[RMDB]
The record gives the reactivity of an RNA of 177 nucleotides to DMS and 2A3.

RNA sequence: GGGAACGACUCGAGUAGAGUCGAAAAGCGGGUAACUUCGGUUACCCGCAAAGACGCGUCUCGACGCGUCGCCGUCGCGUCGCGGCGCGUCGCGUCGCGAGAAAAGGACGAAGUUCGCUUCGUCCAAGAUCACUUGCUAGUUCGCUAGCAAGUGAUCAAAAGAAACAACAACAACAAC
Reactivity to DMS in 0.01 (KOAc 150mM, MgCl2 10mM, bicine 150mM(pH8.5), 24C), signal-to-noise 2, nucleotides 027 to 126: g000c010g000g000g010u000a000a000c000u010u020c220g040g020u000u000a020c000c000c000g010c000a020a030a050g000a110c020g000c020g010u000c000u000c060g010a020c000g000c000g020u000c050g010c040c090g010u000c120g010c140g010u000c080g020c020g000g000c000g020c020g010u000c010g010c100g000u000c040g010c040g020a100g000a100a070a100a080g000g000a010c000g020a020a000g010u000u020c250g010c000u010u000c000g010u000c000c000a000a040
Reactivity to 2A3 in 0.01 (KOAc 150mM, MgCl2 10mM, bicine 150mM(pH8.5), 24C), signal-to-noise 2, nucleotides 027 to 126: g000c010g010g000g000u010a000a020c010u040u060c170g060g020u010u010a000c010c000c000g000c010a000a000a000g010a010c010g000c000g010u000c010u030c020g000a000c000g000c020g000u010c000g050c030c030g140u120c090g000c080g130u140c040g010c000g000g030c010g000c000g000u000c000g000c000g000u010c010g000c060g020a070g050a040a130a030a040g000g000a010c000g000a010a000g010u040u110c220g020c160u010u000c000g000u000c010c000a000a010
DMS (dimethyl sulfate) methylates the pairing face of unpaired adenines and cytosines. It was measured as part of the RMDB library M2PK50. Conditions: 150 mM KOAc, 10 mM MgCl2 and 150 mM bicine (pH 8.5), 24 C. The DMS profile rests on 2,145 reads.